[RMDB]
RNA sequence: GGGAACGACUCGAGUAGAGUCGAAAAUAGAGGCAACUGAUAUCCUCGACUUGGUUGAUUUCGCAAAGUUGCAUUGUGCCUACAGACAGAUCUUGGAAACUACAGUGGAAGCACAAGUUGCCAAAUGUUGCAGCAAUAUUUGCAAUCAGCAUGCGAAAAUAUAUUCGUCGUUCGCGACGAAUAUAUUAAAAGAAACAACAACAACAAC
Reactivity to DMS in 0.01 (KOAc 150mM, MgCl2 10mM, bicine 150mM(pH8.5), 24C), signal-to-noise 4, nucleotides 027 to 156: u010a070g000a090g010g020c070a080a230c030u000g030a130u000a100u000c010c000u000c030g020a100c070u000u010g020g020u000u000g010a100u010u000u010c040g000c020a040a090a170g020u000u010g010c010a100u010u000g020u000g040c030c010u000a160c060a090g020a150c050a050g010a070u000c100u000u010g010g020a070a060a060c030u000a050c120a150g020u010g010g020a110a100g010c030a050c060a090a060g010u000u000g010c010c010a030a060a100u000g010u000u000g000c030a120g020c030a020a080u000a080u000u000u000g000c000a050a080u000c040a080g020c070a120u000g020c020g000a020a060
Reactivity to 2A3 in 0.01 (KOAc 150mM, MgCl2 10mM, bicine 150mM(pH8.5), 24C), signal-to-noise 5, nucleotides 027 to 156: u130a010g040a030g040g000c050a090a050c150u120g050a090u060a050u180c010c010u000c020g060a080c030u090u100g050g000u030u030g020a080u050u100u090c030g000c050a070a030a030g030u020u040g030c030a030u020u060g010u020g040c000c010u060a020c020a040g100a030c010a040g060a120u040c030u080u080g060g050a080a060a040c010u090a070c050a060g010u020g030g060a070a020g000c000a020c020a080a020g010u020u030g030c010c010a060a020a070u160g030u130u100g020c050a030g000c000a030a040u140a300u090u070u030g000c000a010a030u050c020a020g040c020a040u080g020c020g070a090a060